RNA sequence: GGGAACGACUCGAGUAGAGUCGAAAAGAGGCAGCCGGGUCGAGGUAGGCGUACACCUGCUCGGUCAGAAGUCGGUGCUGAGGCGACGCAAGCGGCCUUGUUACGGCGGCCGUUUCCGUUAUAGGAAGCAUGACGCGAUCUUCGGGUUGCGUCGUGCAAAAGAAACAACAACAACAAC
Reactivity to 2A3 in 0.01 (KOAc 150mM, MgCl2 10mM, bicine 150mM(pH8.5), 24C), signal-to-noise 9, nucleotides 027 to 126: g050a010g010g000c010a010g010c010c000g010g000g020u050c010g020a010g010g030u040a020g030g030c030g020u050a020c020a010c010c010u010g000c000u000c000g010g010u040c000a020g040a070a010g030u010c000g000g020u080g000c010u030g030a010g010g020c040g000a010c010g000c010a020a030g080c030g050g010c010c000u020u050g050u040u080a040c040g020g000c000g000g000c000c000g000u010u020u000c020c000g010u050u090a140u080a080g100g040a070a030
Reactivity to DMS in 0.01 (KOAc 150mM, MgCl2 10mM, bicine 150mM(pH8.5), 24C), signal-to-noise 9, nucleotides 027 to 126: g000a080g000g000c010a040g010c010c010g000g000g020u010c020g000a020g000g030u010a060g010g010c020g010u010a090c080a110c020c000u000g000c010u010c000g010g000u010c000a120g010a130a160g010u010c050g000g010u020g000c030u020g010a060g000g010c300g000a050c020g000c060a090a100g020c060g000g010c000c000u000u010g000u010u030a100c030g010g000c040g000g010c000c000g000u010u000u000c030c000g010u030u030a100u030a110g000g010a130a120
This 177-nucleotide RNA was probed chemically with 2A3 and DMS. The reactions ran in a buffer of 150 mM KOAc, 10 mM MgCl2 and 150 mM bicine (pH 8.5), at 24 C. Values cover nucleotides 27 to 126. DMS adducts were read by reverse transcription with MarathonRT. It was measured as part of the RMDB library OK1LIB. For DMS, 108,189 sequencing reads were counted. For 2A3, 75,474 sequencing reads were counted.